RNA sequence: GGGAACGACUCGAGUAGAGUCGAAAAUGGCUUCGACGCCGGUGACAAUCCCUGAGGUGCAUGCCGAGAGCGUAACGUAUCUCGUAAAUCCAACGUUACGAUUAAAUAGUCGCAAACGACGACAACUACGCUCAGGGCGCGCUGGCAGCGUAACAACCUAUGUAGAUACGUUCGCGUAUCUACAUAGAAAAGAAACAACAACAACAAC
Reactivity to 2A3 in 0.01 (KOAc 150mM, MgCl2 10mM, bicine 150mM(pH8.5), 24C), signal-to-noise 8, nucleotides 027 to 156: u090g050g010c050u070u070c070g080a110c060g000c000c000g020g010u030g020a100c080a060a090u100c000c000c000u010g010a030g020g070u090g040c100a110u180g040c060c040g020a050g010a000g060c010g010u010a010a020c020g010u020a110u050c090u040c050g080u100a030a050a090u090c110c070a050a000c030g000u010u010a000c010g000a010u010u120a050a060a100u130a040g020u010c010g000c050a160a180a120c130g170a050c010g010a000c030a050a020c050u070a020c030g000c060u010c000a010g020g000g000c040g000c000g000c000u010g030g000c010a060g030c030g070u080a050a040c030a030a030c040
Reactivity to DMS in 0.01 (KOAc 150mM, MgCl2 10mM, bicine 150mM(pH8.5), 24C), signal-to-noise 4, nucleotides 027 to 156: u000g010g010c050u010u000c030g050a130c050g030c010c020g000g040u010g020a110c060a090a170u010c020c010c000u000g000a090g020g000u000g000c020a060u000g010c040c030g000a150g000a060g020c010g030u010a030a060c080g030u000a090u000c080u000c080g000u000a050a060a070u000c060c080a100a120c020g040u000u000a000c000g010a070u010u010a080a130a200u000a080g020u010c010g030c040a070a080a120c020g010a120c020g000a030c040a120a100c010u000a020c010g090c020u000c000a070g010g030g040c280g010c080g000c010u000g040g020c000a080g010c020g000u000a040a100c050a080a090c060

The data come from the RNA Mapping Database (RMDB), library ARCHII. An RNA of 207 nucleotides, treated with 2A3 and DMS and read out base by base. For 2A3 the reverse transcriptase was SuperScript II with manganese.